Conditions: 150 mM KOAc, 10 mM MgCl2 and 150 mM bicine (pH 8.5), 24 C.
This 177-nucleotide RNA was probed chemically with 2A3 and DMS.
For DMS the reverse transcriptase was MarathonRT.
Reactivities are rounded to 0.1 and cut off at 0 and 3.
2A3 adducts were read by reverse transcription with SuperScript II with manganese.
For DMS, 887 sequencing reads were counted.
RNA sequence: GGGAACGACUCGAGUAGAGUCGAAAAGGCACCAAGCAUGAGGCAACAACUGCAGUACUUGUGGGGAAGGCACAAGUAGGACACCAACAUUACCUGCAAGCAAGACGCAAAAUUAAUAGAACAUCACAGGCUAGAUAACGUUCGCGUUAUCUAGCCUAAAAGAAACAACAACAACAAC
Reactivity to 2A3 in 0.01 (KOAc 150mM, MgCl2 10mM, bicine 150mM(pH8.5), 24C), signal-to-noise 3, nucleotides 027 to 126: g040g000c040a000c020c030a000a070g060c050a060u140g020a020g120g070c020a030a000c040a100a030c090u060g000c040a000g030u030a010c010u020u030g030u000g000g010g050g030a020a020g040g010c010a000c000a020a040g020u030a040g030g040a030c020a020c040c000a030a010c020a050u010u130a050c000c010u000g000c000a000a040g030c020a070a000g040a010c030g000c030a000a040a040a030u120u120a070a110u090a120g090a030a030c040a080u110c050a030c050
Reactivity to DMS in 0.01 (KOAc 150mM, MgCl2 10mM, bicine 150mM(pH8.5), 24C), signal-to-noise 1, nucleotides 027 to 126: g000g060c070a110c010c000a170a100g040c000a070u000g000a110g000g010c100a090a070c130a150a140c080u000g000c080a010g000u070a010c090u110u000g000u000g000g000g000g000a240a140g000g000c100a030c020a010a040g000u000a010g000g050a300c000a040c000c000a010a000c160a000u000u030a110c140c000u000g000c000a100a050g000c110a000a110g000a080c000g000c070a040a030a060a040u070u050a040a000u140a000g000a200a000c170a200u000c300a290c060